Structure probing data (DMS and 2A3) for a 177-nucleotide construct. For 2A3 the reverse transcriptase was SuperScript II with manganese. Reactivities are given for positions 27 through 126. The RNA was probed in 150 mM KOAc, 10 mM MgCl2 and 150 mM bicine (pH 8.5) at 24 C.
[RMDB]
RNA sequence: GGGAACGACUCGAGUAGAGUCGAAAACAUGUGCGUGCACGUGAGCAUGUGUGCCUGUGUUCAUGUGCACGUGUGGGCGUGUCACUGGUGUCAAGGCCUCUGGAACGUGGCUGGCAUUUCUUCCAGCUCCAACCUUAGUAUUCGUACUAAGGUUGGAAAAAGAAACAACAACAACAAC
Reactivity to DMS in 0.01 (KOAc 150mM, MgCl2 10mM, bicine 150mM(pH8.5), 24C), signal-to-noise 6, nucleotides 027 to 126: c060a080u010g020u010g010c010g000u000g000c000a010c010g020u000g010a030g000c000a010u000g010u010g030u000g010c090c060u010g010u000g000u000u000c000a010u000g010u000g010c000a010c000g020u000g000u000g000g010g010c040g020u000g000u000c030a070c040u000g010g010u010g010u000c110a090a120g000g010c030c020u010c040u000g010g000a070a080c140g010u000g010g010c020u010g000g000c140a080u000u000u000c040u000u000c010c020a070g010c140
Reactivity to 2A3 in 0.01 (KOAc 150mM, MgCl2 10mM, bicine 150mM(pH8.5), 24C), signal-to-noise 3, nucleotides 027 to 126: c020a040u120g080u090g090c020g010u020g000c010a000c000g010u010g010a000g020c000a010u040g100u040g070u110g170c000c050u070g010u000g010u010u020c020a000u010g010u000g000c000a000c000g000u000g000u010g000g020g000c040g000u040g020u030c010a020c090u050g030g000u040g060u070c050a120a080g070g010c010c000u040c060u060g080g060a090a040c080g040u010g030g000c010u000g000g040c030a040u050u060u020c010u060u020c020c010a030g020c030